[RMDB]
RNA sequence: GGGAACGACUCGAGUAGAGUCGAAAAUCAAAGCAGCAGAAGCUCGCAAGGAGCAAGAACUUUUCUCGUUCAAAACCUCACCACCUACAAUUAUAAGCUCAAUUAGUAUUGGUGGUGGUUUACAACCAGUAUGUCCAUUCUUCGGAAUGGACAUACUAAAAGAAACAACAACAACAAC
Reactivity to DMS in 0.01 (KOAc 150mM, MgCl2 10mM, bicine 150mM(pH8.5), 24C), signal-to-noise 2, nucleotides 027 to 126: u000c040a110a130a090g020c000a050g020c030a100g030a100a130g020c060u000c150g030c140a110a100g020g010a030g000c080a090a120g000a050a060c020u000u030u000u000c040u010c030g040u000u000c040a050a100a080a070c040c010u000c110a030c000c000a010c020c020u000a030c030a050a050u000u000a120u010a090a090g000c140u020c130a040a020u010u010a080g020u000a030u010u010g010g000u010g000g030u010g010g010u000u000u000a070c180a070a040c110c140
Reactivity to 2A3 in 0.01 (KOAc 150mM, MgCl2 10mM, bicine 150mM(pH8.5), 24C), signal-to-noise 2, nucleotides 027 to 126: u070c040a060a080a000g000c020a040g000c000a020g050a300a020g110c050u030c030g050c120a030a100g280g060a010g010c000a040a080g020a010a020c020u070u030u100u010c050u000c010g040u110u060c010a050a020a020a120c010c020u020c060a000c000c000a000c010c000u030a020c020a020a030u210u130a120u130a190a090g040c060u010c120a050a000u050u020a120g020u030a040u060u090g000g000u000g000g040u000g030g010u000u050u070a040c060a000a030c050c000